Annotation:
This 177-nucleotide RNA was probed chemically with DMS and 2A3. The data come from the RNA Mapping Database (RMDB), library TTRINS. Values cover nucleotides 27 to 126. The reactions ran in a buffer of 150 mM KOAc, 10 mM MgCl2 and 150 mM bicine (pH 8.5), at 24 C.
[RMDB]
RNA sequence: GGGAACGACUCGAGUAGAGUCGAAAAGAUAUGGACUUAUGGAGAGACCAUGAGACGAUGAAAUCAGGCACUCGGAAACGAGUGCCUGAUGGAGUCUCAUAAUUCUCGAUGAAAUAAGUCCUAAGUCGGAUCCAAUAUAGUUCGCUAUAUUGGAUCCAAAAGAAACAACAACAACAAC
Reactivity to DMS in 0.01 (KOAc 150mM, MgCl2 10mM, bicine 150mM(pH8.5), 24C), signal-to-noise 2, nucleotides 027 to 126: g000a100u010a300u010g010g010a040c000u000u000a030u000g010g000a120g030a030g000a060c300c280a030u000g000a020g010a000c010g000a150u030g010a080a120a000u000c000a000g000g000c000a010c000u010c020g000g010a080a060a150c010g000a010g000u000g010c010c000u000g000a000u000g000g010a130g000u000c010u000c000a010u000a200a140u000u000c000u000c000g000a140u020g000a110a120a010u000a030a010g000u030c000c000u000a050a070g000u020c080
Reactivity to 2A3 in 0.01 (KOAc 150mM, MgCl2 10mM, bicine 150mM(pH8.5), 24C), signal-to-noise 1, nucleotides 027 to 126: g080a030u110a080u260g000g010a010c000u000u010a000u020g030g010a100g000a000g000a040c020c070a040u020g010a020g000a020c080g290a300u120g010a030a040a040u000c000a000g000g000c060a000c000u000c010g080g040a000a120a070c000g000a000g000u010g000c000c020u000g000a000u000g000g010a010g000u000c000u010c010a000u010a020a010u080u010c010u020c010g300a300u090g020a020a000a020u000a000a000g030u000c000c010u030a140a040g110u100c090